RNA sequence: GGGAACGACUCGAGUAGAGUCGAAAACUUCUGCUUUACAUGGAGGCGAUGAAGAUGGAGAUGCCUGUCUAUGCCUCGGUGGAUGGCGUGGUCAGUAGCAUUAAGGUUGACGUGGGUCAGCAGGUGACAGCGUAAGUACGUUCGCGUACUUACGCUGAAAAGAAACAACAACAACAAC
Reactivity to DMS in 0.01 (KOAc 150mM, MgCl2 10mM, bicine 150mM(pH8.5), 24C), signal-to-noise 2, nucleotides 027 to 126: c090u010u010c040u000g000c020u000u000u020a140c110a120u010g000g020a080g010g020c040g000a120u010g010a020a070g000a090u000g030g030a180g000a040u000g000c050c000u000g000u000c020u000a080u010g000c030c010u010c010g000g030u010g010g000a030u010g000g000c040g050u000g000g010u000c010a040g010u020a130g010c040a030u000u000a080a070g010g000u000u010g020a050c050g000u010g010g000g010u010c050a040g010c040a060g010g010u020g020a220
Reactivity to 2A3 in 0.01 (KOAc 150mM, MgCl2 10mM, bicine 150mM(pH8.5), 24C), signal-to-noise 2, nucleotides 027 to 126: c020u080u020c020u080g040c040u080u120u070a080c020a070u120g080g000a000g010g000c020g040a100u150g060a080a070g030a050u090g020g010a160g020a040u060g060c000c000u020g020u020c010u010a030u070g020c020c010u060c110g080g030u150g160g070a100u150g000g000c080g010u040g000g000u000c000a000g010u110a020g040c040a040u060u080a110a060g090g010u060u090g040a020c070g020u100g080g130g000u000c050a000g030c020a000g000g110u040g020a020
An RNA of 177 nucleotides, treated with DMS and 2A3 and read out base by base. The reactions ran in a buffer of 150 mM KOAc, 10 mM MgCl2 and 150 mM bicine (pH 8.5), at 24 C. Source: RMDB library OK2TST, as collected in RNAgym. For 2A3 the reverse transcriptase was SuperScript II with manganese.